[RMDB]
RNA sequence: GGGAACGACUCGAGUAGAGUCGAAAAUGAAAUGUAGACAUUAUACGAAUGUUGUAGAAACAAAUAUCAAAGAGCGUUACUUCAUAAUAGUAGACGAAGGAGCCGAACUUUGCCCAGAUAAAAGUAUGAAAAAAGAACAGCAAAGGUUAUUAGGAGCCAUAUCGCACAUAUUCGUAUGUGCGAUAUGAAAAGAAACAACAACAACAAC
Reactivity to 2A3 in 0.01 (KOAc 150mM, MgCl2 10mM, bicine 150mM(pH8.5), 24C), signal-to-noise 2, nucleotides 027 to 156: u100g010a000a040a020u120g010u090a070g030a070c050a080u100u140a080u150a120c100g040a080a040u070g000u010u000g010u070a050g110a070a110a010c090a050a080a090u180a010u070c080a080a050a000g030a020g030c000g040u040u050a010c000u020u040c020a010u040a250a080u050a180g080u040a010g040a130c120g010a030a000g030g010a010g050c000c010g000a030a020c020u050u030u040g000c000c020c060a030g040a040u060a040a040a000a010g100u130a060u150g020a000a010a000a080a050a000g010a090a030c040a010g010c010a020a040a040g000g020u060u070a060u050u050a010g040g000a000g010c000
Reactivity to DMS in 0.01 (KOAc 150mM, MgCl2 10mM, bicine 150mM(pH8.5), 24C), signal-to-noise 1, nucleotides 027 to 156: u000g030a060a060a080u000g030u000a100g000a070c040a140u000u030a140u000a160c130g000a150a140u000g000u000u000g020u010a050g030a190a070a040c080a030a060a120u000a080u010c080a080a140a070g020a120g020c040g030u000u020a090c030u000u000c030a070u010a060a080u030a090g040u010a070g020a030c050g010a050a150g010g010a080g020c080c060g050a060a110c000u010u000u010g020c000c000c060a150g000a140u000a030a080a010a070g000u000a070u000g020a020a080a060a100a030a100g010a050a110c080a000g020c020a050a070a030g020g020u000u000a020u000u030a070g030g000a080g040c060
Structure probing data (2A3 and DMS) for a 207-nucleotide construct. Conditions: 150 mM KOAc, 10 mM MgCl2 and 150 mM bicine (pH 8.5), 24 C. The data come from the RNA Mapping Database (RMDB), library OK3TST.